[RMDB]
RNA sequence: GGGAACGACUCGAGUAGAGUCGAAAAGCCCCGCAUAUCCAUGCAGCUUGACAACCAGUGUCGCCCAUGAUGACACUCUCGAAAGCGGGACGUGACACUCUCCCCCACCAAAACAAGGUGUACGUCCGUAACAGAAGGACUUCGGUCCUUCUGUUACAAAAGAAACAACAACAACAAC
Reactivity to DMS in 0.01 (KOAc 150mM, MgCl2 10mM, bicine 150mM(pH8.5), 24C), signal-to-noise 1, nucleotides 027 to 126: g000c050c060c060c300g000c070a110u000a060u020c120c060a010u000g000c080a220g000c000u000u000g020a300c140a030a120c100c090a130g040u000g030u000c020g050c060c110c170a070u000g000a060u010g010a020c020a030c020u000c020u000c160g020a030a090a020g000c060g000g010g000a030c000g000u000g010a000c000a060c000u000c100u020c000c000c000c070c070a100c150c070a050a050a060a030c170a060a020g000g000u000g000u000a020c010g030u000c020c030